[RMDB]
RNA sequence: GGGAACGACUCGAGUAGAGUCGAAAAGAUAUGGAUCGUCUCCAGCAACAGCCGUGACGUCGGAAACGACGUGACGGACAUGCUGGGACGAUCCUAAGUCAAAGUACACCUGUUCGCAGGUGUACAAUCAAUUGACCAUGUUCGCAUGGUCAAUUGAAAAAGAAACAACAACAACAAC
Reactivity to 2A3 in 0.01 (KOAc 150mM, MgCl2 10mM, bicine 150mM(pH8.5), 24C), signal-to-noise 3, nucleotides 027 to 126: g000a010u020a010u060g000g000a010u000c000g020u010c160u090c140c020a000g000c050a020a300c100a220g040c010c010g000u040g190a010c000g000u000c010g000g040a010a000a010c000g010a000c010g000u020g100a000c010g030g000a010c010a170u300g000c000u000g000g000g020a000c000g010a000u020c000c000u000a000a000g000u000c010a000a110a080g010u000a000c000a010c000c010u010g050u060u120c300g010c120a000g000g000u010g000u020a000c000a000a060
Reactivity to DMS in 0.01 (KOAc 150mM, MgCl2 10mM, bicine 150mM(pH8.5), 24C), signal-to-noise 3, nucleotides 027 to 126: g000a010u000a030u000g000g000a000u000c000g010u000c010u050c020c010a000g020c010a130a110c300a150g000c010c000g030u000g000a010c000g010u000c000g010g000a020a010a030c000g000a010c000g020u000g000a000c000g000g000a010c160a060u010g000c000u010g010g020g000a000c000g000a000u000c000c000u000a000a060g000u000c000a140a110a140g010u000a000c010a000c000c000u000g010u000u010c260g030c020a010g010g000u000g010u010a000c010a060a100
An RNA of 177 nucleotides, treated with 2A3 and DMS and read out base by base. For 2A3 the reverse transcriptase was SuperScript II with manganese. The data come from the RNA Mapping Database (RMDB), library TTRDES. The reactions ran in a buffer of 150 mM KOAc, 10 mM MgCl2 and 150 mM bicine (pH 8.5), at 24 C. DMS adducts were read by reverse transcription with MarathonRT. For 2A3, 7,914 sequencing reads were counted.